[RMDB]
RNA sequence: GGGAACGACUCGAGUAGAGUCGAAAAGCCGACUGCACGUGCGUGCGAGCAGUUUUCCAAAUCGCACGUUUCACGUAAAGACCCAACUCUACUCGAUGCGAGGGUCAGCAAGCAAGCAGCAAUAAAACCAUGUUCACUCAUUCGUGAGUGAACAUGGAAAAGAAACAACAACAACAAC
Reactivity to DMS in 0.01 (KOAc 150mM, MgCl2 10mM, bicine 150mM(pH8.5), 24C), signal-to-noise 1, nucleotides 027 to 126: g010c070c030g000a090c060u000g000c230a010c000g030u000g040c000g010u000g000c000g010a040g030c180a150g000u000u000u000u000c120c050a060a130a060u000c000g000c000a000c010g000u030u000u010c000a070c000g000u000a010a110a070g000a160c020c020c020a070a060c030u000c000u010a000c010u000c000g000a010u010g000c000g000a120g000g010g020u000c010a110g000c020a030a080g040c030a030a080g030c010a030g030c100a080a070u000a020a070a080a250
Reactivity to 2A3 in 0.01 (KOAc 150mM, MgCl2 10mM, bicine 150mM(pH8.5), 24C), signal-to-noise 1, nucleotides 027 to 126: g010c030c030g070a100c040u070g000c030a000c000g010u020g000c010g010u030g000c010g010a030g030c150a080g030u020u020u150u090c050c010a080a100a050u030c000g000c000a010c000g030u020u090u070c030a020c010g000u000a040a070a060g020a010c010c020c010a000a000c010u020c000u010a030c000u020c000g030a040u100g000c030g010a070g000g040g000u010c030a000g000c020a000a070g010c000a020a060g010c000a000g050c030a070a020u090a170a100a020a010